[RMDB]
RNA sequence: GGGAACGACUCGAGUAGAGUCGAAAAGUAUUUAUCAUGCGAUAACCAGCUUGACAAGAAUGCUAGUUUUCUGUGGGGUCAGCGAGAAUACCACGCACGUCGGUUUUUCCUGAACUUCUUCCAACAACCAGUUACUUAGCUUCGGCUAAGUAACUGGAAAAGAAACAACAACAACAAC
Reactivity to 2A3 in 0.01 (KOAc 150mM, MgCl2 10mM, bicine 150mM(pH8.5), 24C), signal-to-noise 3, nucleotides 027 to 126: g010u030a020u020u080u020a100u030c050a040u120g080c040g110a040u060a150a100c130c040a020g030c000u040u010g000a000c020a140a080g050a100a030u050g010c000u060a080g100u000u080u000u000c090u100g040u050g010g000g010g010u000c000a010g030c040g070a020g030a020a040u130a130c000c000a050c010g170c030a090c110g160u090c050g010g010u000u030u000u010u030c010c010u010g000a100a070c020u070u000c000u080u000c070c030a020a030c010a080a060
Reactivity to DMS in 0.01 (KOAc 150mM, MgCl2 10mM, bicine 150mM(pH8.5), 24C), signal-to-noise 1, nucleotides 027 to 126: g070u040a000u000u070u000a220u010c050a070u050g040c000g000a010u020a050a160c300c130a070g000c040u030u000g010a060c220a040a110g000a010a020u050g000c000u000a040g010u000u000u000u000c030u000g010u000g000g000g000g000u000c000a020g300c090g020a160g000a020a000u080a000c020c010a060c120g000c120a100c070g000u000c070g050g000u000u000u000u000u000c000c000u020g000a080a080c160u000u000c070u010u000c020c010a100a120c260a070a070

The record gives the reactivity of an RNA of 177 nucleotides to 2A3 and DMS. For 2A3 the reverse transcriptase was SuperScript II with manganese. For DMS the reverse transcriptase was MarathonRT. Conditions: 150 mM KOAc, 10 mM MgCl2 and 150 mM bicine (pH 8.5), 24 C. For 2A3, 1,775 sequencing reads were counted. The data come from the RNA Mapping Database (RMDB), library OK1LIB.